RNA sequence: GGGAACGACUCGAGUAGAGUCGAAAAGUGAACGAUCUCGGUUGUUUCUCUGAAGGCAUGAUCACCCCGUCCGAUGCGGAAGUUCGUGCUUACGUCGAACGCGAAAGUCGGACGGCGGCCAUGAGUCAAUAUGUUUAAGGCUUCGGCCUUAAACAAAGCGUUCGAUUAGAUUCGUCUAAUCGAACGCAAAAGAAACAACAACAACAAC
Reactivity to 2A3 in 0.01 (KOAc 150mM, MgCl2 10mM, bicine 150mM(pH8.5), 24C), signal-to-noise 1, nucleotides 027 to 156: g130u090g060a140a020c070g030a130u000c050u090c150g000g000u020u010g020u000u030u000c080u000c030u050g080a140a090g120g010c020a000u030g020a030u120c030a030c000c000c000c000g010u000c000c000g000a020u050g080c020g080g050a050a100g030u030u000c010g040u090g080c110u220u110a050c040g000u050c000g040a010a000c000g000c000g170a140a080a010g010u000c010g000g000a000c040g010g000c010g010g000c010c000a010u010g000a000g060u020c000a070a020u000a050u190g000u000u000u000a000a000g000g030c000u020u090c220g040g000c000c020u000u000a000a000a000c000a000a000a000